An RNA of 177 nucleotides, treated with 2A3 and DMS and read out base by base. The 2A3 profile rests on 43,747 reads. Source: RMDB library TTRDES, as collected in RNAgym.
[RMDB]
RNA sequence: GGGAACGACUCGAGUAGAGUCGAAAAGAUAUGGAUCGGGAGAGCGAUAAGCAUAUGUCGGAAACGACAUCAUGCUUUUGACGCUCGAACGAUCCUAAGUCAAAAGGAGCUCGUUCGCGAGCUCCAACAGUACGUAAUAGUUCGCUAUUACGUACUGAAAAGAAACAACAACAACAAC
Reactivity to 2A3 in 0.01 (KOAc 150mM, MgCl2 10mM, bicine 150mM(pH8.5), 24C), signal-to-noise 7, nucleotides 027 to 126: g000a000u040a020u150g000g000a000u010c020g000g020g010a090g010a010g060c030g030a070u060a120a000g000c000a010u010a000u020g010u000c000g020g040a060a060a070c010g010a010c000a000u020c050a010u010g000c010u030u000u020u060g080a040c050g000c000u000c000g000a000a000c000g000a000u000c000c000u000a000a000g010u010c020a010a000a060a290g000g000a000g000c000u000c010g050u120u090c300g040c060g110a000g000c000u010c000c000a000a000
Reactivity to DMS in 0.01 (KOAc 150mM, MgCl2 10mM, bicine 150mM(pH8.5), 24C), signal-to-noise 9, nucleotides 027 to 126: g010a040u000a300u010g000g010a010u000c000g000g000g010a300g000a020g020c010g020a090u000a010a020g010c000a010u000a020u000g000u010c000g010g000a130a080a200c010g010a010c000a000u000c260a000u000g000c000u000u000u000u000g030a230c090g010c000u000c010g010a300a170c000g000a010u000c000c000u000a010a090g000u000c040a100a110a120a150g000g000a010g010c000u000c010g010u000u020c230g020c010g000a010g000c000u000c000c000a010a040